[RMDB]
RNA sequence: GGGAACGACUCGAGUAGAGUCGAAAAAAAUCGCAUAGCAAAGAGUCAUAAAAAUAGAGAGCUUUGCGAGACCUACCAAGGGUGAAGAGAUACCAUCCAAGGAGCUGAAGAGAAAUCUCACUUUAGAAACGGAAGCGGUGCUUCGGCACCGCUUCAAGCAUUAUCUCAUGUUCGCAUGAGAUAAUGCAAAAGAAACAACAACAACAAC
Reactivity to 2A3 in 0.01 (KOAc 150mM, MgCl2 10mM, bicine 150mM(pH8.5), 24C), signal-to-noise 1, nucleotides 027 to 156: a010a000a010u030c010g000c020a000u020a000g000c010a000a160a050g030a080g060u190c100a200u220a180a090a160a170a000u250a170g090a000g010a020g010c000u030u060u000g000c000g000a000g000a030c000c000u000a000c050c030a000a100g070g020g010u000g000a050a060g070a020g010a080u030a110c060c020a000u000c000c000a000a130g040g040a030g080c100u170g030a070a030g040a030g030a100a100a090u030c030u010c000a030c020u220u150u050a070g020a100a090a020c090g090g000a000a000g000c020g020g020u000g020c000u000u090c090g030g030c000a000c000c000g000c000u000u000c000a000a000
The record gives the reactivity of an RNA of 207 nucleotides to 2A3. The RNA was probed in 150 mM KOAc, 10 mM MgCl2 and 150 mM bicine (pH 8.5) at 24 C.